[RMDB]
The data come from the RNA Mapping Database (RMDB), library RFM100. Chemical mapping of a 177-nucleotide RNA with 2A3. Conditions: 150 mM KOAc, 10 mM MgCl2 and 150 mM bicine (pH 8.5), 24 C.
RNA sequence: GGGAACGACUCGAGUAGAGUCGAAAAACGAGUACCUGGUACGCCAGGUACUCGAAGGAGACCGCGGCCACGCCGAGUAGGAUCGAGGGUACAGUCUCCAGCUGCAUCCGCUACGGCGGAUGCAGCAUGAGCAUAGGUUUUUCGAAACCUAUGCUCAAAAAGAAACAACAACAACAAC
Reactivity to 2A3 in 0.01 (KOAc 150mM, MgCl2 10mM, bicine 150mM(pH8.5), 24C), signal-to-noise 1, nucleotides 027 to 126: a000c000g000a010g010u000a000c000c000u000g000g010u070a060c240g030c020c000a000g000g000u010a010c000u000c000g000a010a000g020g000a000g000a000c000c010g010c040g010g000c000c000a000c020g090c000c000g010a050g070u300a030g060g000a210u030c010g070a150g050g000g000u000a010c000a010g000u000c000u010c000c010a000g020c000u000g000c000a020u000c040c020g000c030u080a200c300g150g000c000g000g000a000u000g000c000a010g000c000a000